[RMDB]
RNA sequence: GGGAACGACUCGAGUAGAGUCGAAAAGCCUGGUGGGUAGUUUAACUGGGGCGGUUGCCUCCCAAAAUGUAACGGAGGCGCCCAAAGGUUCCCUCAGCCUGGUUGGCAAUCAGGUGUCGAGUGCAAGCCUUACGUACUGCUUCGGCAGUACGUAAGGAAAAGAAACAACAACAACAAC
Reactivity to DMS in 0.01 (KOAc 150mM, MgCl2 10mM, bicine 150mM(pH8.5), 24C), signal-to-noise 2, nucleotides 027 to 126: g020c010c000u040g070g050u000g020g020g000u050a040g000u000u010u070a080a070c020u000g000g050g030g020c140g030g000u020u020g050c020c000u000c000c000c300a020a120a210a160u000g000u030a070a250c300g020g030a000g000g000c000g000c030c000c090a090a040a060g000g000u000u000c000c080c000u000c070a260g000c000c010u000g010g000u000u000g040g010c200a180a050u000c000a040g000g070u010g000u000c120g000a060g000u050g000c150a170a100g000
Reactivity to 2A3 in 0.01 (KOAc 150mM, MgCl2 10mM, bicine 150mM(pH8.5), 24C), signal-to-noise 2, nucleotides 027 to 126: g030c010c000u020g050g070u030g020g050g020u070a080g080u120u160u160a100a000c000u030g000g000g020g000c020g000g000u110u300g040c000c000u090c010c000c000a010a070a040a100u300g010u120a050a020c010g000g000a000g010g000c000g010c010c010c010a010a150a000g050g000u020u020c000c000c000u000c020a000g000c000c000u040g000g010u030u090g050g010c000a000a030u010c000a040g000g000u000g070u040c090g020a000g060u090g090c010a010a030g070
The record gives the reactivity of an RNA of 177 nucleotides to DMS and 2A3.
Values cover nucleotides 27 to 126.
The RNA was probed in 150 mM KOAc, 10 mM MgCl2 and 150 mM bicine (pH 8.5) at 24 C.